[RMDB]
RNA sequence: GGGAACGACUCGAGUAGAGUCGAAAAAGUGUGGUACGGUAUGGCAAGGCUUGCCUCGGAGCCAAGCGGGAGGGCUCCCGGGGCGCCGCACGGGCGCAGUGCUGCGCGAGACUCUAGGCCCGUGACUGUCACGGACAAAUUCCGUGACCGUGUUAGGCAUAUAGAACGGGUUCGCCCGUUCUAUAUGAAAAGAAACAACAACAACAAC
Reactivity to 2A3 in 0.01 (KOAc 150mM, MgCl2 10mM, bicine 150mM(pH8.5), 24C), signal-to-noise 7, nucleotides 027 to 156: a000g060u040g000u020g020g020u050a030c050g020g050u090a070u080g080g020c080a080a090g030g000c060u090u240g000c020c000u010c010g010g000a010g010c010c020a050a030g050c050g020g020g010a030g020g010g010c000u080c040c050c020g010g000g000g000c010g000c000c000g000c010a010c010g020g020g010c070g010c060a020g020u030g060c030u040g010c030g000c020g010a050g030a040c050u050c080u150a080g080g030c000c000c000g010u020g040a020c010u010g000u000c000a000c010g000g010a030c140a080a200a090u250u010c000c000g000u000g000a010c000c010g010u030g040u090u120a060g040g000
Reactivity to DMS in 0.01 (KOAc 150mM, MgCl2 10mM, bicine 150mM(pH8.5), 24C), signal-to-noise 2, nucleotides 027 to 156: a050g020u010g020u000g010g040u000a030c040g020g040u010a070u020g000g020c020a100a190g020g020c060u010u010g010c000c000u000c020g010g010a080g020c020c000a060a130g060c040g020g000g010a240g030g000g020c030u000c030c030c020g010g010g030g030c020g000c030c030g000c040a010c030g030g000g050c030g080c080a060g030u010g030c060u000g000c050g010c010g010a100g010a110c080u000c040u000a080g040g020c010c010c000g040u010g010a110c020u000g020u000c010a030c000g010g000a040c030a110a060a220u010u010c000c000g070u010g000a010c020c070g000u000g000u000u000a150g010g010
An RNA of 207 nucleotides, treated with 2A3 and DMS and read out base by base. For 2A3 the reverse transcriptase was SuperScript II with manganese. The RNA was probed in 150 mM KOAc, 10 mM MgCl2 and 150 mM bicine (pH 8.5) at 24 C.